[RMDB]
RNA sequence: GGGAACGACUCGAGUAGAGUCGAAAAGCUAGGGGUCCUCCAGCGGAGGACUGAAGAAACUCCGGUUUCUUCUUUCACUCUGUAGCUGGAAUCCCUGUUGCGCUUGCUGGCGAAACCUGCAGGGAAGCUAGCUGGGUCCCGCUAGUCGAGCGGACUCGGCAUACAUUUAGUUCGCUAAAUGUAUGCCAAAAGAAACAACAACAACAAC
Reactivity to DMS in 0.01 (KOAc 150mM, MgCl2 10mM, bicine 150mM(pH8.5), 24C), signal-to-noise 1, nucleotides 027 to 156: g020c080u000a080g020g000g010g030u010c040c100u020c020c020a130g020c070g030g020a040g040g010a030c010u000g000a040a000g020a020a030a020c000u010c300c300g150g060u010u010u000c000u000u000c000u010u010u010c070a130c000u010c010u010g000u000a110g030c000u000g010g010a090a040u000c010c000c040u000g020u000u000g020c020g040c050u000u000g010c050u020g010g030c020g010a080a090a080c010c010u000g030c030a300g000g010g040a190a120g020c060u000a110g030c010u000g050g010g090u000c010c010c010g000c030u000a080g020u010c080g010a100g040c020g030g000a080c010u000c040
Reactivity to 2A3 in 0.01 (KOAc 150mM, MgCl2 10mM, bicine 150mM(pH8.5), 24C), signal-to-noise 2, nucleotides 027 to 156: g050c050u040a020g000g000g040g020u010c030c030u040c000c010a000g000c000g020g000a010g010g010a020c000u000g000a000a000g000a000a010a010c020u020c200c300g100g010u000u010u000c000u000u010c030u000u010u020c170a270c070u000c000u020g070u120a020g000c000u000g000g000a000a000u000c000c000c020u020g040u130u050g100c030g000c030u020u050g020c000u030g000g000c030g030a210a040a030c020c000u070g020c020a050g050g050g060a130a060g140c030u030a060g000c050u110g010g000g050u050c060c120c000g000c000u040a040g080u200c080g020a000g010c010g000g000a000c010u010c080